[RMDB]
RNA sequence: GGGAACGACUCGAGUAGAGUCGAAAAGAACAGAAUAGAGCAGGCAAAACCUCAACUGCUUUCCUAGGUAACAACCCUGUAUAAAACUGACAAUGAGAACUGGUACCUGAUUCUUGCGUUCUAGCAACCACAGAGUGAGAUUCGUCUCACUCUGUGGAAAAGAAACAACAACAACAAC
Reactivity to 2A3 in 0.01 (KOAc 150mM, MgCl2 10mM, bicine 150mM(pH8.5), 24C), signal-to-noise 2, nucleotides 027 to 126: g030a020a010c030a020g060a100a010u140a090g060a010g020c030a010g060g000c050a040a030a100a100c020c040u080c050a060a070c040u010g000c000u050u030u040c000c000u070a020g020g040u020a080a030c020a050a070c010c040c000u000g090u060a120u090a090a080a050a040c070u090g030a050c040a060a120u160g030a050g050a110a020c040u050g090g000u020a050c020c010u040g030a150u090u080c010u050u040g030c000g000u040u000c030u020a040g050c040a030a030
Reactivity to DMS in 0.01 (KOAc 150mM, MgCl2 10mM, bicine 150mM(pH8.5), 24C), signal-to-noise 3, nucleotides 027 to 126: g030a120a030c020a100g020a100a090u000a090g020a070g000c060a010g010g010c100a060a050a080a240c100c030u000c080a070a110c020u000g010c020u010u010u000c070c030u000a070g010g030u010a050a100c150a030a060c060c020c000u000g000u010a070u010a030a020a050a080c080u000g000a090c110a090a100u000g020a080g000a070a030c080u000g000g010u000a070c000c020u010g010a090u010u000c040u000u010g020c110g020u000u000c050u010a190g020c180a080a130